[RMDB]
RNA sequence: GGGAACGACUCGAGUAGAGUCGAAAACGAUCGGCAUUACGUAUAGCCGGCCGAUCGAUCGCGAUAUAUUAAUAUCGGCGCAUUAAUCGUACGUACGGCGCCGGCUAAUAUGCAUCGGCUACGAUGCCGGAUUCGUCCUGUUCGCAGGACGAAUCCGAAAAGAAACAACAACAACAAC
Reactivity to DMS in 0.01 (KOAc 150mM, MgCl2 10mM, bicine 150mM(pH8.5), 24C), signal-to-noise 1, nucleotides 027 to 126: c020g000a040u000c040g000g070c080a100u000u000a050c150g030u000a080u010a090g000c010c030g000g020c040c000g010a010u000c000g000a040u000c070g000c040g000a070u000a000u000a150u010u010a020a020u010a040u000c000g040g000c010g030c190a050u010u000a070a130u010c070g010u000a070c210g000u000a160c150g000g010c090g020c000c000g000g020c120u000a050a040u000a020u000g020c010a040u010c040g020g010c180u040a080c000g000a080u000g030c020
Reactivity to 2A3 in 0.01 (KOAc 150mM, MgCl2 10mM, bicine 150mM(pH8.5), 24C), signal-to-noise 2, nucleotides 027 to 126: c020g030a010u020c000g040g000c030a080u150u210a070c060g050u120a080u080a160g050c000c000g000g030c000c010g000a020u000c010g000a070u070c030g010c000g070a020u040a000u030a020u190u150a240a060u050a020u180c020g080g000c010g050c030a050u030u200a060a060u170c090g050u100a110c050g050u020a030c030g090g000c000g030c030c000g000g010c030u020a110a090u060a010u120g000c010a030u040c020g080g020c080u040a030c050g020a010u030g000c030